The record gives the reactivity of an RNA of 177 nucleotides to 2A3 and DMS.

RNA sequence: GGGAACGACUCGAGUAGAGUCGAAAAGAUAUGGACCUAUGACUUCGAUAAGCUGGUAUCGGAAACGAUACGCAGCUUUUGACGAAGGGUAUAGGUCCUAAGUCAAAGCUGCAGUUCGCUGCAGCAACAAUAUCUUUCUGUUCGCAGAAAGAUAUUGAAAAGAAACAACAACAACAAC
Reactivity to 2A3 in 0.01 (KOAc 150mM, MgCl2 10mM, bicine 150mM(pH8.5), 24C), signal-to-noise 6, nucleotides 027 to 126: g030a020u080a060u150g000g000a000c000c000u010a020u020g090a060c010u040u020c060g110a110u050a240a000g000c010u020g000g020u010a010u010c010g020g010a110a060a030c020g000a010u010a010c080g030c110a000g000c010u010u010u000u030g050a040c040g020a010a020g040g020g030u090a010u010a020g010g000u000c000c000u010a030a000g020u000c030a040a090a100g000c010u010g000c000a010g020u070u180c230g090c170u010g000c010a000g000c000a000a000
Reactivity to DMS in 0.01 (KOAc 150mM, MgCl2 10mM, bicine 150mM(pH8.5), 24C), signal-to-noise 9, nucleotides 027 to 126: g010a050u000a300u010g010g000a010c000c000u000a000u000g000a120c000u000u000c000g020a200u000a020a010g030c000u000g010g010u000a000u000c000g010g000a120a100a180c010g000a010u000a000c000g010c010a000g000c000u000u000u000u010g020a210c170g010a030a010g000g010g030u010a020u000a010g000g010u000c000c000u000a000a080g000u000c040a110a130a170g000c000u000g000c000a010g010u000u020c280g020c000u000g010c000a010g000c010a040a060
Conditions: 150 mM KOAc, 10 mM MgCl2 and 150 mM bicine (pH 8.5), 24 C.
For 2A3, 39,315 sequencing reads were counted.
Reactivities are rounded to 0.1 and cut off at 0 and 3.
Source: RMDB library TTRDES, as collected in RNAgym.
For DMS, 34,770 sequencing reads were counted.